The data come from the RNA Mapping Database (RMDB), library TTRINS. Chemical mapping of a 177-nucleotide RNA with DMS. Values cover nucleotides 27 to 126. Values are in units of 0.01, from 0 to 300, in steps of 10.

RNA sequence: GGGAACGACUCGAGUAGAGUCGAAAAGAUAUGGACGACGUAGGGAGUAUCUAUUACUUGAUCUUGGUGUCGGAAACGACACCCAAGAUCAAGUAAUAGAUACAUCGAUCUACCUCGUCCUAAGUCAUCUAAAUUCCUUGUUCGCAAGGAAUUUAGAAAAAGAAACAACAACAACAAC
Reactivity to DMS in 0.01 (KOAc 150mM, MgCl2 10mM, bicine 150mM(pH8.5), 24C), signal-to-noise 2, nucleotides 027 to 126: g020a060u010a300u000g010g000a020c010g010a010c290g010u000a000g000g020g000a060g040u000a000u000c000u000a000u000u000a010c000u000u000g000a010u000c000u000u000g000g020u000g000u010c000g000g010a110a110a220c000g020a010c010a020c160c070c060a010a020g010a010u000c000a000a010g000u000a000a000u000a010g000a010u010a000c000a130u000c200g020a070u010c000u000a000c000c080u000c000g000u000c000c000u000a000a080g010u000c050a120